This 207-nucleotide RNA was probed chemically with DMS and 2A3. The reactions ran in a buffer of 150 mM KOAc, 10 mM MgCl2 and 150 mM bicine (pH 8.5), at 24 C. High DMS reactivity at an A or C suggests that its Watson-Crick edge is free. For DMS, 1,786 sequencing reads were counted. High 2A3 reactivity points to a flexible backbone, as in loops and unpaired stretches.

[RMDB]
RNA sequence: GGGAACGACUCGAGUAGAGUCGAAAAGGAAUAGAGAUGUGCCCUUGAGAAAAGUGUAGAAUCUCAAUGUGCAGAUGAUUUAAAAUGUGCGUGCACAUCAAAUGUUCAUGUGUACUUACAUACUUUAUUACAGAGAAGUCUUUGGUAUACAAAAUAGCGAACACGAUAGUUUCGACUAUCGUGUUCGAAAAGAAACAACAACAACAAC
Reactivity to DMS in 0.01 (KOAc 150mM, MgCl2 10mM, bicine 150mM(pH8.5), 24C), signal-to-noise 1, nucleotides 027 to 156: g010g010a090a040u000a170g010a150g020a050u010g030u000g020c010c110c110u010u010g010a070g000a050a110a120a150g040u000g010u000a030g010a180a170u000c000u010c000a020a030u000g010u000g020c040a100g030a060u000g000a120u030u000u010a040a050a080a040u000g000u010g000c050g000u000g040c000a030c000a000u000c030a040a050a130u000g030u000u010c040a060u020g040u000g080u000a010c010u000u000a040c020a010u000a020c040u000u000u000a020u040u010a270c080a080g000a190g010a030a090g000u010c060u000u000u000g040g030u000a040u000a120c080a040a060a040a110u010a090g030
Reactivity to 2A3 in 0.01 (KOAc 150mM, MgCl2 10mM, bicine 150mM(pH8.5), 24C), signal-to-noise 4, nucleotides 027 to 156: g080g010a060a040u060a050g030a030g010a030u010g010u010g000c020c040c000u020u020g050a080g000a030a140a080a100g110u190g040u180a080g050a130a090u000c000u000c000a020a050u080g000u040g030c010a030g030a120u100g020a060u120u150u300a110a120a030a030u050g030u010g030c040g060u050g000c000a010c000a000u010c010a010a130a070u160g010u070u080c060a030u040g000u000g000u000a020c000u060u030a040c020a070u050a030c010u070u120u100a110u170u060a140c080a000g170a000g020a150a000g000u000c030u050u070u120g040g010u040a040u010a070c060a020a170a050a020u130a080g080